[RMDB]
RNA sequence: GGGAACGACUCGAGUAGAGUCGAAAAGAUGACCGGUUCGCCGGUCAUCAAAUAGGGAAACGGCGUGCGCGGCACCGUCCGCGGAACAUACGGAAAAUAAAAAAACGCUAACCUUCGGGUUAGCGAACCCACCAUAAAUGUUCGCAUUUAUGGUGGGAAAAGAAACAACAACAACAAC
Reactivity to 2A3 in 0.01 (KOAc 150mM, MgCl2 10mM, bicine 150mM(pH8.5), 24C), signal-to-noise 1, nucleotides 027 to 126: g000a000u000g000a000c000c020g000g020u050u060c120g030c060c000g000g000u000c020a000u020c010a010a000a000u060a000g040g010g050a030a070a070c040g050g000c050g030u030g050c040g010c010g030g000c050a100c190c070g080u090c000c000g000c000g000g040a060a000c010a030u190a040c030g040g110a050a020a100a040u260a050a140a030a010a000a000a030c020g030c020u000a000a000c000c000u030u030c210g030g010g000u000u000a010g010c000g000a010a000
Reactivity to DMS in 0.01 (KOAc 150mM, MgCl2 10mM, bicine 150mM(pH8.5), 24C), signal-to-noise 1, nucleotides 027 to 126: g000a030u000g010a000c000c010g040g010u000u030c250g020c010c010g000g000u000c010a010u000c000a000a060a080u000a100g000g000g000a070a110a060c050g000g000c070g010u010g000c040g030c020g000g030c030a120c080c130g000u020c000c000g000c000g000g000a080a040c130a030u010a080c050g000g000a070a070a070a140u060a030a020a030a080a030a100a080c000g000c000u000a000a000c000c000u010u010c280g010g000g000u000u000a020g000c000g000a010a040